Source: RMDB library TTRDES, as collected in RNAgym. Structure probing data (DMS) for a 177-nucleotide construct. For DMS the reverse transcriptase was MarathonRT.
RNA sequence: GGGAACGACUCGAGUAGAGUCGAAAAGAUAUGGAGCCACUAAGCAACAGCUCCGUGUCGGAAACGACACCGGAGACAUGCUUAGUGGCUCCUAAGUCAAAGUACCCAGGGUUCGCCCUGGGUACAAGUUCUAAUCCGAGUUCGCUCGGAUUAGAACAAAAGAAACAACAACAACAAC
Reactivity to DMS in 0.01 (KOAc 150mM, MgCl2 10mM, bicine 150mM(pH8.5), 24C), signal-to-noise 1, nucleotides 027 to 126: g000a000u000a000u040g000g000a020g010c000c020a030c000u000a010a000g050c010a170a090c160a200g000c000u000c000c000g020u010g000u000c000g010g010a010a000a030c010g020a010c010a010c300c110g000g010a040g000a020c060a110u010g000c010u000u000a000g000u000g000g000c000u000c010c000u000a000a020g000u000c000a190a120a190g000u000a000c000c000c000a040g000g020g000u000u030c300g010c000c000c000u000g000g000g040u000a000c000a020a090